[RMDB]
RNA sequence: GGGAACGACUCGAGUAGAGUCGAAAAAGGCCAGGGGAGCAGGACGAUUUGGUCACCUUUGCUGAGGGCCGCGUUUCGUACGGAACAGUGAUAUCAAGUGAUCCGAAGCCUGGAUGGGGAGGUGUUAAUUUAUAGGGCUAUUCGUAGCCCUAUAAAUAAAAGAAACAACAACAACAAC
Reactivity to 2A3 in 0.01 (KOAc 150mM, MgCl2 10mM, bicine 150mM(pH8.5), 24C), signal-to-noise 1, nucleotides 027 to 126: a000g050g030c040c020a000g000g030g000g010a070g060c020a020g050g010a050c060g040a070u040u060u130g000g020u010c040a070c010c020u080u050u090g040c020u040g030a140g070g100g010c000c010g030c000g000u070u090u090c050g010u070a050c060g010g000a090a020c010a020g000u000g120a050u030a030u250c060a130a070g050u020g030a010u010c010c030g040a020a010g030c010c010u040g020g000a050u090g010g000g040g010a030g030g020u050g040u120u040a050
Reactivity to DMS in 0.01 (KOAc 150mM, MgCl2 10mM, bicine 150mM(pH8.5), 24C), signal-to-noise 8, nucleotides 027 to 126: a090g010g020c040c050a090g000g010g000g010a110g020c060a050g010g010a080c090g010a130u000u010u000g010g010u000c040a060c030c060u000u000u010g010c060u010g000a150g010g010g010c020c030g020c090g000u000u000u000c130g010u010a080c080g000g000a060a070c040a060g010u010g000a080u010a070u000c140a070a110g010u010g000a050u010c030c040g010a080a140g010c050c040u000g010g010a110u000g010g000g010g000a060g000g010u000g010u000u000a060